About this RNA: Source: RMDB library RFM100, as collected in RNAgym. Structure probing data (2A3 and DMS) for a 177-nucleotide construct.
[RMDB]
RNA sequence: GGGAACGACUCGAGUAGAGUCGAAAAUCAGCGGUAACGCAUAUGAACUUGGUGACAUUGGCAUGGGCCCUAGGAAAAGUUAUCUUUUUUCUUUAACAGUCUGUAACCCUGGAAACGAAUUAUUCGGGUUCUUUUUGUCUUUCGAGACAAAAAGAACAAAAGAAACAACAACAACAAC
Reactivity to 2A3 in 0.01 (KOAc 150mM, MgCl2 10mM, bicine 150mM(pH8.5), 24C), signal-to-noise 3, nucleotides 027 to 126: u070c040a000g000c030g060g040u070a110a000c050g000c030a010u060a050u160g070a060a000c030u020u050g050g010u010g060a010c000a060u030u090g030g000c000a010u020g000g000g080c020c000c020u050a040g060g080a010a010a070a090g070u100u080a160u090c000u040u040u000u020u030u010c010u010u080u040a140a060c010a040g020u000c000u030g050u100a060a060c000c000c010u010g060g030a020a070a040c040g060a060a050u180u040a110u140u070c050g000g030
Reactivity to DMS in 0.01 (KOAc 150mM, MgCl2 10mM, bicine 150mM(pH8.5), 24C), signal-to-noise 2, nucleotides 027 to 126: u020c050a030g020c060g030g000u000a050a030c130g030c090a140u050a040u000g020a130a110c070u010u000g000g020u020g030a060c130a070u000u000g010g020c070a100u030g000g030g030c000c000c010u020a040g000g000a050a000a050a070g010u000u000a040u010c010u000u010u000u000u000u000c000u000u010u000a080a110c070a090g000u000c030u000g000u000a110a050c010c030c010u030g000g020a030a080a090c070g050a090a040u030u040a090u010u000c080g000g000
For DMS, 2,236 sequencing reads were counted.